This 207-nucleotide RNA was probed chemically with 2A3.
It was measured as part of the RMDB library OK3TST.
For 2A3 the reverse transcriptase was SuperScript II with manganese.
Conditions: 150 mM KOAc, 10 mM MgCl2 and 150 mM bicine (pH 8.5), 24 C.

RNA sequence: GGGAACGACUCGAGUAGAGUCGAAAAAUUACCAAGACUGGUAGGAAGAUUCUCGUAGCCGUAACCUCAAACAAGGACAACUUGAGAACUGUUACCUGCACUACCGAUACUGGUAAGGCUGUCCUCAAUCUGGACCCACCUAUGCGCUUUGCGCAUAGGGAGGAGGCUACUUCGGUAGCCUCCUCCCAAAAGAAACAACAACAACAAC
Reactivity to 2A3 in 0.01 (KOAc 150mM, MgCl2 10mM, bicine 150mM(pH8.5), 24C), signal-to-noise 2, nucleotides 027 to 156: a000u040u000a010c000c000a020a000g030a080c070u120g050g000u020a010g010g010a220a050g080a300u260u050c040u020c050g000u020a000g050c070c030g020u040a040a110c020c020u000c040a080a140a160c050a060a100g140g050a090c020a130a070c170u010u020g000a010g010a080a020c050u070g000u020u040a010c000c050u010g030c080a050c080u000a000c010c000g020a010u060a230c010u010g010g010u000a010a020g040g010c080u080g000u020c000c000u050c090a050a270u150c020u050g000g000a010c010c030c000a060c090c010u020a010u020g000c020g020c050u030u180u300g000c000g000c040a030u070a100